RNA sequence: GGGAACGACUCGAGUAGAGUCGAAAAACUAGUAUGUACACGAUGAGACUGCCGUGUCGUCUAGACUGGGGAUCCAAUAAUCUCAGAUCUGCGAGAUAUUGUCUCAAGAGUACGAGACAAGUACUCAGUGUUAUGUGUACUUCGGUGCACGUAACACAAAAGAAACAACAACAACAAC
Reactivity to DMS in 0.01 (KOAc 150mM, MgCl2 10mM, bicine 150mM(pH8.5), 24C), signal-to-noise 9, nucleotides 027 to 126: a080c010u000a040g020u030a040u010g010u040a020c030a070c040g010a160u030g010a080g000a050c050u010g010c060c020g000u000g010u000c020g010u010c070u030a020g010a160c020u000g000g000g000g000a080u020c160c140a080a100u030a080a080u020c010u000c010a030g000a110u020c070u010g010c040g000a030g000a050u010a040u010u010g000u000c010u000c010a060a110g010a060g010u000a020c030g000a100g010a070c170a050a060g000u010a060c010u000c010a150
Reactivity to 2A3 in 0.01 (KOAc 150mM, MgCl2 10mM, bicine 150mM(pH8.5), 24C), signal-to-noise 9, nucleotides 027 to 126: a000c030u040a020g100u130a070u130g100u090a030c030a010c040g070a070u140g020a020g060a060c050u080g070c050c010g010u020g030u020c000g010u000c040u050a010g010a050c020u020g000g000g010g030a020u040c050c030a040a040u130a080a070u030c010u000c010a070g030a300u030c030u110g070c050g020a030g010a040u050a060u080u060g010u000c000u000c020a030a020g050a020g050u040a020c040g010a010g040a070c060a070a020g020u010a020c000u010c030a010
The record gives the reactivity of an RNA of 177 nucleotides to DMS and 2A3. Reactivities are given for positions 27 through 126. For DMS the reverse transcriptase was MarathonRT.